[RMDB]
RNA sequence: GGGAACGACUCGAGUAGAGUCGAAAACUAGCCGCACUUCUGGUAGCUUCGGCUCCAGCAAUCAUCAGGGGAUGCCUGUAAACCCAAAAUGAUUGUCAUAUAGAACAGGAUCGUCGCCUAGUACGUUGUGGACGAAGCGACUAAAACUUACGCAACUCAUAGUAUCUACGUUCGCGUAGAUACUAUGAAAAGAAACAACAACAACAAC
Reactivity to DMS in 0.01 (KOAc 150mM, MgCl2 10mM, bicine 150mM(pH8.5), 24C), signal-to-noise 1, nucleotides 027 to 156: c020u000a130g030c030c010g020c150a140c080u000u050c120u000g010g070u010a060g020c020u000u010c170g040g010c040u000c020c010a060g060c100a000a020u000c010a020u000c020a300g040g000g020g000a230u010g000c050c000u030g010u010a100a140a300c020c000c000a020a110a130a030u000g020a030u000u000g010u000c100a070u000a020u000a140g010a190a060c060a070g000g000a050u020c100g040u000c000g050c010c000u010a300g000u000a020c080g020u010u020g020u000g000g000a100c050g000a160a080g000c000g010a050c020u010a090a020a030a100c190u000u010a040c040g040c010a060a070c090u000
Reactivity to 2A3 in 0.01 (KOAc 150mM, MgCl2 10mM, bicine 150mM(pH8.5), 24C), signal-to-noise 7, nucleotides 027 to 156: c040u040a030g110c030c040g120c120a140c100u110u050c000u030g070g070u240a020g010c010u070u060c180g070g000c000u020c000c000a010g010c010a000a010u000c000a000u000c020a030g000g000g000g010a020u050g020c000c000u000g010u040a080a100a100c000c000c010a010a010a000a010u000g000a010u010u010g020u050c030a050u220a040u090a230g060a070a010c000a000g020g020a010u010c000g000u000c000g000c000c000u000a000g000u000a010c010g010u010u010g010u030g000g000a000c000g010a030a000g000c000g000a000c000u000a000a000a000a020c070u160u200a020c010g000c010a010a010c010u000
Chemical mapping of a 207-nucleotide RNA with DMS and 2A3. The DMS profile rests on 1,712 reads. The reactions ran in a buffer of 150 mM KOAc, 10 mM MgCl2 and 150 mM bicine (pH 8.5), at 24 C. The 2A3 profile rests on 9,299 reads.